RNA sequence: GGGAACGACUCGAGUAGAGUCGAAAACGAGGACCAGCACCGACCCGGCGGCCACCCGAGCUUGCAACUCGUCUCGGCUGAUCGGUUCCAGGCUGUCUCUGUCGGUGUAGUACUGCCGCACCAGGGAAGUAGGAGAUAAGUUCGCUUAUCUCCUACUAAAAGAAACAACAACAACAAC
Reactivity to DMS in 0.01 (KOAc 150mM, MgCl2 10mM, bicine 150mM(pH8.5), 24C), signal-to-noise 7, nucleotides 027 to 126: c100g010a100g000g010a070c090c040a120g000c020a050c040c250g000a040c060c140c080g010g010c020g000g000c010c010a110c170c030c010g010a020g010c040u000u000g010c140a090a150c050u000c040g010u000c030u000c120g020g010c030u000g000a060u000c030g000g000u010u000c060c120a170g020g010c040u000g000u000c020u000c050u000g010u000c010g000g010u000g010u000a060g010u010a070c090u000g000c030c020g010c070a100c040c010a050g000g010g010a120
Reactivity to 2A3 in 0.01 (KOAc 150mM, MgCl2 10mM, bicine 150mM(pH8.5), 24C), signal-to-noise 4, nucleotides 027 to 126: c050g010a040g020g070a050c040c050a020g010c010a010c030c030g010a020c000c030c000g000g000c000g010g000c010c000a020c020c010c000g010a010g010c050u070u140g030c040a040a120c030u020c070g130u030c070u050c090g060g000c020u060g020a210u060c020g040g000u080u000c040c020a030g010g020c000u020g010u020c010u020c030u060g070u050c010g010g010u020g010u020a060g040u020a050c050u090g070c030c020g020c020a050c020c010a020g060g010g010a060